[RMDB]
RNA sequence: GGGAACGACUCGAGUAGAGUCGAAAAGAUAUGGAGCCGAUAGACAUGAGUGUCGGAAACGACACCUCAACAGCUAUCUUUGGGCUCCUAAGUCAAACCGUAGCAUACCUUCGGGUAUGCUACGGAACACCAAGACAUACUUCGGUAUGUCUUGGUGAAAAGAAACAACAACAACAAC
Reactivity to DMS in 0.01 (KOAc 150mM, MgCl2 10mM, bicine 150mM(pH8.5), 24C), signal-to-noise 3, nucleotides 027 to 126: g000a010u010a270u020g000g010a010g020c010c020g000a010u000a000g000a100c060a190u000g000a020g010u000g000u000c010g020g000a040a040a100c000g010a010c000a010c180c090u000c010a030a080c260a120g010c040u000a000u000c010u010u020u010g050g020g000c000u000c000c000u000a010a100g020u000c030a080a100a140c000c010g010u000a000g010c000a010u000a010c000c000u000u010c170g010g010g030u000a000u000g010c000u010a000c010g000g010a040a070
Reactivity to 2A3 in 0.01 (KOAc 150mM, MgCl2 10mM, bicine 150mM(pH8.5), 24C), signal-to-noise 2, nucleotides 027 to 126: g030a000u040a030u120g000g000a010g000c010c030g020a000u010a010g090a150c050a090u050g010a010g030u010g000u010c010g000g010a040a050a010c000g000a000c010a020c010c070u000c000a120a220c070a030g120c010u020a020u040c000u130u100u120g120g030g000c010u000c000c000u010a030a020g060u010c040a090a020a060c000c000g000u000a000g030c000a000u000a000c010c020u040u140c300g020g010g000u000a010u010g010c000u010a000c000g000g000a000a000
The record gives the reactivity of an RNA of 177 nucleotides to DMS and 2A3. Source: RMDB library TTRDEL, as collected in RNAgym. Values cover nucleotides 27 to 126. The 2A3 profile rests on 6,363 reads. For 2A3 the reverse transcriptase was SuperScript II with manganese. DMS (dimethyl sulfate) methylates the pairing face of unpaired adenines and cytosines.